[RMDB]
The data come from the RNA Mapping Database (RMDB), library OK3TST. Structure probing data (2A3) for a 207-nucleotide construct.
RNA sequence: GGGAACGACUCGAGUAGAGUCGAAAAUUGACCGCAAAUCUCUAGAAUGGGGAGAAUAACAAGUGUAUUCGCAUUCAAGUUUGCCGCGGUGCGACGGAAAUAUAUUCAAAAUAACCAUCUUUCCUGCGUCGGCCGAGAAACUUGCCGCGGCGCUCACGAGUUAUUCCCUUUUCGAAGGGAAUAACUCAAAAGAAACAACAACAACAAC
Reactivity to 2A3 in 0.01 (KOAc 150mM, MgCl2 10mM, bicine 150mM(pH8.5), 24C), signal-to-noise 2, nucleotides 027 to 156: u040u040g010a010c080c000g000c040a000a110a090u060c010u060c030u010a020g010a160a040u080g000g040g050g020a100g010a070a050u170a090a010c060a150a090g100u030g020u140a110u060u140c030g030c060a000u010u100c040a020a200g010u050u080u150g030c000c020g030c000g000g000u070g010c010g000a010c000g000g030a030a040a000u120a000u040a060u090u110c100a110a170a130a080u120a110a030c020c000a060u140c080u000u070u040c020c010u030g020c020g020u030c020g060g020c050c020g050a050g080a110a230a080c110u050u110g020c040c020g000c000g020g030c010g020c000u020c040a020c070
As a SHAPE reagent, 2A3 marks flexible, mostly unpaired nucleotides at the ribose 2'-OH.